The record gives the reactivity of an RNA of 177 nucleotides to 2A3 and DMS. The RNA was probed in 150 mM KOAc, 10 mM MgCl2 and 150 mM bicine (pH 8.5) at 24 C. 2A3 adducts were read by reverse transcription with SuperScript II with manganese.
[RMDB]
RNA sequence: GGGAACGACUCGAGUAGAGUCGAAAAACUAGUAAAUCAAAGAUGACUUGGCCGUCAUCGUCUAAACGUUCAUGUGCAAGUGGUAAAAAUGAACCAUUUAACUCACCUUUAUCAUUAUGCCCGAUAACUCACCAUACGUGUUCGCACGUAUGGUGAGAAAAGAAACAACAACAACAAC
Reactivity to 2A3 in 0.01 (KOAc 150mM, MgCl2 10mM, bicine 150mM(pH8.5), 24C), signal-to-noise 1, nucleotides 027 to 126: a000c010u030a010g110u210a020a100a180u200c150a040a070a150g020a010u020g000a010c020u100u110g080g000c090c020g020u000c010a020u000c020g020u020c030u060a060a110a010c040g040u070u040c080a020u110g010u010g060c020a000a060g030u030g060g040u050a070a050a020a010a120u100g020a060a010c050c010a100u080u120u050a060a040c070u010c010a010c000c010u030u100u100a070u040c000a000u030u070a040u230g010c000c000c000g010a030u040a040a080
Reactivity to DMS in 0.01 (KOAc 150mM, MgCl2 10mM, bicine 150mM(pH8.5), 24C), signal-to-noise 2, nucleotides 027 to 126: a110c070u000a070g000u010a050a050a080u000c110a150a090a140g010a060u010g000a050c020u000u000g050g010c200c210g010u000c000a010u000c000g080u000c040u010a010a050a050c170g020u000u000c090a090u010g000u020g010c060a070a080g020u000g050g000u000a020a080a020a040a110u000g000a020a020c080c160a130u000u000u020a080a140c160u000c020a040c060c030u000u000u000a010u000c020a030u000u010a060u000g010c000c050c080g010a140u010a030a130
It was measured as part of the RMDB library OK2TRN. DMS adducts were read by reverse transcription with MarathonRT.